[RMDB]
RNA sequence: GGGAACGACUCGAGUAGAGUCGAAAACGUACGUCCAUGCAUGCAUGUCGUACGCACUAGACAGACGACAGAGUCGCGUACCAUGGACAUGACACUAGAGUACCUAGCGAUCCCAUGAUCGAGACUACAGCUCACGCUCAUUCGUGAGCGUGAGCUGAAAAGAAACAACAACAACAAC
Reactivity to 2A3 in 0.01 (KOAc 150mM, MgCl2 10mM, bicine 150mM(pH8.5), 24C), signal-to-noise 1, nucleotides 027 to 126: c030g020u050a010c010g040u080c060c000a000u010g000c010a120u130g000c000a020u020g000u080c020g020u000a040c020g000c010a020c020u030a040g050a040c020a020g030a080c040g000a010c060a080g060a000g060u090c020g000c000g010u080a020c000c000a020u030g040g010a040c060a050u120g020a010c010a020c040u040a040g000a010g170u170a180c010c000u000a010g020c000g090a040u010c080c030c070a080u130g030a120u070c010g060a020g030a130c020u020a030
Reactivity to DMS in 0.01 (KOAc 150mM, MgCl2 10mM, bicine 150mM(pH8.5), 24C), signal-to-noise 2, nucleotides 027 to 126: c000g060u000a080c170g010u030c270c020a030u030g010c110a250u010g000c040a040u000g000u000c000g030u000a050c010g030c150a050c180u050a140g010a090c000a090g010a050c160g000a020c060a300g010a010g020u000c080g040c010g040u030a210c120c040a000u030g010g030a070c070a110u000g020a160c030a060c000u000a030g010a210g000u000a110c130c000u000a010g000c040g020a060u000c040c070c050a040u060g000a020u010c060g040a140g010a040c070u010a080
Background: Source: RMDB library OK2TRN, as collected in RNAgym. This 177-nucleotide RNA was probed chemically with 2A3 and DMS. The RNA was probed in 150 mM KOAc, 10 mM MgCl2 and 150 mM bicine (pH 8.5) at 24 C. As a SHAPE reagent, 2A3 marks flexible, mostly unpaired nucleotides at the ribose 2'-OH.